[RMDB]
RNA sequence: GGGAACGACUCGAGUAGAGUCGAAAAGAUAUGGAACAUUGAGGUCAACAGCUACAGGGUCGGAAACGACCCGUAGACAUGACCCAAUGUUCCUAAGUCAAAGCGGCUAUCGUUCGCGAUAGCCGCAGAAGAGGACAUUGUUCGCAAUGUCCUCUUCAAAAGAAACAACAACAACAAC
Reactivity to DMS in 0.01 (KOAc 150mM, MgCl2 10mM, bicine 150mM(pH8.5), 24C), signal-to-noise 3, nucleotides 027 to 126: g010a010u000a020u000g000g000a000a010c000a000u000u000g010a130g020g010u010c010a130a080c270a150g000c000u000a010c000a180g020g000g010u000c000g010g010a010a000a030c000g010a010c000c000c000g000u000a000g000a000c030a290u030g010a030c000c000c000a020a000u010g000u000u000c000c000u000a000a050g010u000c010a090a120a130g010c000g020g000c000u000a000u000c000g030u000u020c240g040c020g010a020u000a010g010c010c000g000c000a000
Reactivity to 2A3 in 0.01 (KOAc 150mM, MgCl2 10mM, bicine 150mM(pH8.5), 24C), signal-to-noise 2, nucleotides 027 to 126: g000a000u010a010u060g000g000a010a010c010a020u020u080g060a300g260g000u020c170a300a080c090a300g000c000u040a030c140a300g000g000g000u000c000g000g000a010a000a000c000g010a010c020c020c000g000u000a000g010a020c040a220u300g000a000c000c000c010a000a000u000g000u000u000c000c000u000a000a000g010u020c020a040a070a080g000c000g010g000c000u000a010u020c000g080u100u130c280g000c000g180a010u000a010g010c010c000g010c000a000